[RMDB]
RNA sequence: GGGAACGACUCGAGUAGAGUCGAAAAGCCCGGGGAGGAUACUUAAUGCUCGGGUCCGCGCAGCAGAGUCAGUCCUCCCAGAGCCCGCCGGGACCCCCAUGCGUCUGGCAGGCGCGGGGGCCGGCCACGAAGUAGUCGUAUUCGUACGACUACUUCGAAAAGAAACAACAACAACAAC
Reactivity to 2A3 in 0.01 (KOAc 150mM, MgCl2 10mM, bicine 150mM(pH8.5), 24C), signal-to-noise 2, nucleotides 027 to 126: g070c010c010c010g000g010g020g000a010g010g000a010u040a090c000u030u050a110a050u170g010c010u020c050g020g020g190u100c080c070g110c030g010c100a010g000c000a000g010a030g130u100c070a000g050u000c020c000u000c000c000c000a000g000a000g030c010c040c050g030c000c000g000g010g150a220c000c000c000c000c030a100u170g000c010g000u030c040u080g230g100c120a100g020g000c000g000c000g010g000g000g000g000c000c000g000g000c000c000a020
Reactivity to DMS in 0.01 (KOAc 150mM, MgCl2 10mM, bicine 150mM(pH8.5), 24C), signal-to-noise 2, nucleotides 027 to 126: g000c060c050c010g050g000g000g000a030g030g030a030u000a050c010u020u010a070a130u000g010c010u000c050g010g020g020u050c090c080g030c090g000c170a020g020c050a070g000a000g010u010c210a090g000u000c000c000u000c000c030c000a080g000a130g010c050c090c130g030c010c000g000g000g000a250c060c010c000c020c020a190u050g070c020g040u000c000u020g020g020c150a080g000g000c000g000c010g000g010g010g050g040c000c000g000g000c000c120a030